Structure probing data (2A3 and DMS) for a 177-nucleotide construct. Reactivities are given for positions 27 through 126. The 2A3 profile rests on 3,338 reads. DMS adducts were read by reverse transcription with MarathonRT.

[RMDB]
RNA sequence: GGGAACGACUCGAGUAGAGUCGAAAAAGCCUCAGCCAAAUCCUGGGGAGGGUUUAGGCAUCCAAAUGGGUAGCAAUAGCUCCGUCCCUUUGGAGAGACGGUCCAGAGACCGGGCCAGUCAGACCCGGUCGGGAAAGACGUUCGCGUCUUUCCCGACAAAAGAAACAACAACAACAAC
Reactivity to 2A3 in 0.01 (KOAc 150mM, MgCl2 10mM, bicine 150mM(pH8.5), 24C), signal-to-noise 4, nucleotides 027 to 126: a010g080c020c000u020c010a010g020c000c010a050a090a020u020c010c020u070g020g000g070g010a020g000g020g000u020u030u050a100g010g000c010a020u020c000c000a000a030a070u220g010g010g010u050a020g010c010a110a240u060a150g010c030u050c060c070g120u100c010c010c000u010u020u040g030g000a030g000a010g010a020c030g020g000u000c000c030a060g040a010g010a170c060c010g000g000g020c020c020a070g040u030c010a020g020a110c010c000c000g010
Reactivity to DMS in 0.01 (KOAc 150mM, MgCl2 10mM, bicine 150mM(pH8.5), 24C), signal-to-noise 2, nucleotides 027 to 126: a140g010c030c010u020c040a110g050c050c010a050a060a050u000c040c000u000g000g030g030g000a090g000g020g000u000u000u010a070g000g000c010a180u000c010c020a030a060a040u070g000g000g040u010a030g020c060a160a130u040a060g020c050u000c270c100g000u020c000c000c000u000u000u040g000g020a010g000a060g000a030c020g000g000u000c010c070a150g010a090g000a050c050c030g020g030g050c040c010a110g000u020c200a120g010a110c010c000c000g010